An RNA of 207 nucleotides, treated with 2A3 and DMS and read out base by base. For 2A3 the reverse transcriptase was SuperScript II with manganese. For DMS the reverse transcriptase was MarathonRT. Values cover nucleotides 27 to 156. Conditions: 150 mM KOAc, 10 mM MgCl2 and 150 mM bicine (pH 8.5), 24 C. It was measured as part of the RMDB library RNAMAK.
[RMDB]
RNA sequence: GGGAACGACUCGAGUAGAGUCGAAAAGAUAUGGAAUGUGUGGAGUCUCAAUAUUACUAUAAUCCUCUCUCGGAAACGAGAGAGGGUAGUAAUGAUGAGACGUUGAAACACAUUCCUAAGUCAAAGUCUCAAUUACCGUUCGCGGUAAUUGAGACAACUUCCCUAAAACCUUCGGGUUUUAGGGAAGAAAAGAAACAACAACAACAAC
Reactivity to 2A3 in 0.01 (KOAc 150mM, MgCl2 10mM, bicine 150mM(pH8.5), 24C), signal-to-noise 3, nucleotides 027 to 156: g030a020u090a030u120g000g000a000a000u000g010u000g000u010g000g040a040g000u000c000u010c010a020a040u090a010u160u000a000c010u010a020u100a250a300u120c000c000u000c000u000c000u000c000g040g050a100a060a040c020g000a010g000a000g000a000g000g000g000u000a000g000u000a000a000u000g070a040u060g000a000g010a000c010g010u040u030g000a010a000a000c000a000c000a000u000u000c000c000u000a040a010g020u010c040a150a050a010g000u000c000u010c000a000a000u000u000a000c010c020g030u030u070c300g020c000g170g010u000a000a010u010u010g000a000g000a000c000a000a000
Reactivity to DMS in 0.01 (KOAc 150mM, MgCl2 10mM, bicine 150mM(pH8.5), 24C), signal-to-noise 2, nucleotides 027 to 156: g010a110u020a270u020g000g000a060a020u010g020u000g000u000g000g010a170g000u010c000u000c000a060a130u000a020u000u000a010c000u010a030u000a200a050u010c000c000u000c000u010c000u000c010g000g000a180a120a260c010g020a040g010a010g000a000g110g010g000u000a010g000u000a010a000u020g000a080u000g000a000g000a000c030g010u000u010g000a170a270a030c010a010c000a000u010u000c020c000u020a000a050g010u010c040a060a100a170g010u000c010u000c000a020a010u000u000a020c000c000g010u010u010c300g060c040g040g030u010a010a020u000u010g000a010g000a000c000a000a030